[RMDB]
RNA sequence: GGGAACGACUCGAGUAGAGUCGAAAAUAAGUUAUGAAUCUUCCCCAAAAUUCAUAACAUUUCUCCUUAACCGAACUGUGAAAGCAGAUUCGUUGUUCUACGCAAUGAUCACCCCAAUCAUUGCGUAAACCGGGUAAAUUUUCGAAUUUACCCGGUUAAAAGAAACAACAACAACAAC
Reactivity to DMS in 0.01 (KOAc 150mM, MgCl2 10mM, bicine 150mM(pH8.5), 24C), signal-to-noise 3, nucleotides 027 to 126: u020a040a070g000u000u010a010u000g000a020a010u000c040u000u000c030c010c030c020a100a160a120a010u000u000c000a010u000a000a000c010a100u010u000u000c060u010c030c150u000u010a100a080c220c060g000a010a040c030u000g000u000g010a090a060a150g000c000a020g000a160u000u000c020g030u020u000g010u020u000c130u000a010c000g000c010a010a000u000g010a020u020c040a250c060c010c010c020a190a030u000c000a000u000u000g010c000g010u000a000
Reactivity to 2A3 in 0.01 (KOAc 150mM, MgCl2 10mM, bicine 150mM(pH8.5), 24C), signal-to-noise 5, nucleotides 027 to 126: u160a060a030g000u000u000a000u010g010a000a000u000c040u070u180c040c000c000c020a010a070a030a040u010u010c000a000u000a010a000c010a030u010u090u020c070u050c010c040u200u220a070a100c060c030g030a020a000c010u000g020u030g080a100a060a030g050c020a040g020a300u060u060c020g040u020u070g010u040u040c020u020a000c010g000c010a000a000u010g000a000u010c020a170c020c000c000c010a000a000u010c000a000u000u000g000c010g000u000a000